The record gives the reactivity of an RNA of 177 nucleotides to DMS and 2A3.
For 2A3 the reverse transcriptase was SuperScript II with manganese.
DMS adducts were read by reverse transcription with MarathonRT.
The RNA was probed in 150 mM KOAc, 10 mM MgCl2 and 150 mM bicine (pH 8.5) at 24 C.
Reactivities are given for positions 27 through 126.
The data come from the RNA Mapping Database (RMDB), library TTRDEL.
RNA sequence: GGGAACGACUCGAGUAGAGUCGAAAAGAUAUGGACCGAUCAAAUGGGACGAAGAACUCGGAAACGAGGGAGUCCGUUUGAGUCGGUCCUAAGUCAAAACCGUGGAUAACUUCGGUUAUCCACGGAACAGUAUAAGAACCUUCGGGUUCUUAUACUGAAAAGAAACAACAACAACAAC
Reactivity to DMS in 0.01 (KOAc 150mM, MgCl2 10mM, bicine 150mM(pH8.5), 24C), signal-to-noise 5, nucleotides 027 to 126: g000a070u000a300u010g010g000a010c000c020g020a090u000c010a000a000a000u010g030g050g000a020c000g010a120a180g010a090a180c000u000c000g000g000a130a100a220c020g000a030g000g000g000a100g020u000c000c000g000u000u000u000g000a030g020u000c000g010g000u000c000c010u000a010a060g000u000c040a110a050a080a100c000c000g010u000g000g000a000u000a000a010c000u000u020c220g030g010u000u000a000u000c000c010a000c000g010g010a000a030
Reactivity to 2A3 in 0.01 (KOAc 150mM, MgCl2 10mM, bicine 150mM(pH8.5), 24C), signal-to-noise 3, nucleotides 027 to 126: g010a020u060a020u130g000g010a010c010c010g010a010u020c000a000a000a040u210g300g010g030a010c030g160a260a130g010a080a020c010u010c010g020g030a060a060a030c010g000a010g010g000g000a010g000u000c000c010g020u000u010u000g040a070g060u030c000g000g000u000c000c000u000a000a000g000u000c000a010a000a080a140c000c000g010u010g000g000a000u010a030a010c010u050u100c300g060g000u000u000a010u010c000c000a000c010g000g000a000a000